[RMDB]
RNA sequence: GGGAACGACUCGAGUAGAGUCGAAAACACCCCGCGUUCGCGCGGGGUGAAACAGGUAGUUGCUAUCUCAAUUACCUGAACAGGCCAUGGUCUCGAUAGCAAAAACUGAUGACUUCGGUCAUCAGAACUGUUAGGAUAGGUUCGCCUAUCCUAACAGAAAAGAAACAACAACAACAAC
Reactivity to 2A3 in 0.01 (KOAc 150mM, MgCl2 10mM, bicine 150mM(pH8.5), 24C), signal-to-noise 4, nucleotides 027 to 126: c000a000c000c010c000c000g030c000g030u020u050c260g000c000g000c020g070g050g000g000u000g000a020a010a000c010a000g000g010u010a020g000u010u030g030c070u160a100u270c050u000c150a010a040u020u010a010c000c000u000g000a060a030c060a060g090g000c040c020a070u110g040g000u020c030u000c070g060a070u090a030g060c060a010a040a040a070a150c010u010g000a010u010g000a000c000u010u080c240g100g000u010c000a000u000c000a000g000a010a020
Reactivity to DMS in 0.01 (KOAc 150mM, MgCl2 10mM, bicine 150mM(pH8.5), 24C), signal-to-noise 3, nucleotides 027 to 126: c000a020c000c000c010c010g030c010g040u000u000c180g030c010g080c000g020g010g000g020u000g000a000a050a130c010a010g000g010u000a000g020u000u010g000c190u010a050u010c150u010c040a020a010u000u010a010c000c000u010g000a090a100c150a150g010g010c030c040a050u010g010g010u000c040u000c050g000a060u010a060g000c110a100a090a050a060a100c020u010g020a010u000g000a020c000u010u010c150g020g000u000c000a010u000c010a000g000a060a080